[RMDB]
About this RNA: Conditions: 150 mM KOAc, 10 mM MgCl2 and 150 mM bicine (pH 8.5), 24 C. This 177-nucleotide RNA was probed chemically with DMS and 2A3. For 2A3 the reverse transcriptase was SuperScript II with manganese.
RNA sequence: GGGAACGACUCGAGUAGAGUCGAAAACUGGUCGCAUCGGCACGGAAAGGGUGCCGUGGCACUGCGUGGCGGCGCCACCGAGCUGCUGCUGGCGAUGGUGCGCCGACUCUCGGUUGCCGACACCGGCUACCCUCUGAAUAUUCGUAUUCAGAGGGUAAAAAGAAACAACAACAACAAC
Reactivity to DMS in 0.01 (KOAc 150mM, MgCl2 10mM, bicine 150mM(pH8.5), 24C), signal-to-noise 9, nucleotides 027 to 126: c040u010g000g010u000c070g020c140a100u020c000g000g000c010a030c030g010g000a150a120a160g010g000g010u000g010c000c000g020u000g000g020c010a030c010u000g010c060g000u000g000g010c000g000g000c000g000c100c040a010c010c020g000a280g010c010u000g030c110u020g020c110u020g010g020c010g000a230u050g000g010u000g000c010g010c000c000g000a020c000u000c000u000c010g000g010u010u030g030c000c000g010a110c150a080c100c010g000g010c080
Reactivity to 2A3 in 0.01 (KOAc 150mM, MgCl2 10mM, bicine 150mM(pH8.5), 24C), signal-to-noise 9, nucleotides 027 to 126: c020u040g030g020u040c040g010c060a090u060c020g020g010c010a010c020g120g220a160a120a130g240g030g000u010g000c000c000g000u030g000g000c010a000c010u030g010c030g020u020g010g000c000g000g000c000g030c060c020a040c010c010g020a030g010c020u090g040c060u130g050c110u150g050g000c020g060a120u290g020g000u020g010c010g000c000c000g010a010c000u000c000u010c000g030g000u130u170g000c000c000g020a030c020a010c030c010g010g000c010
Annotation
It was measured as part of the RMDB library OK1LIB. In probing experiments dimethyl sulfate is read out at A N1 and C N3, which are open when not base-paired.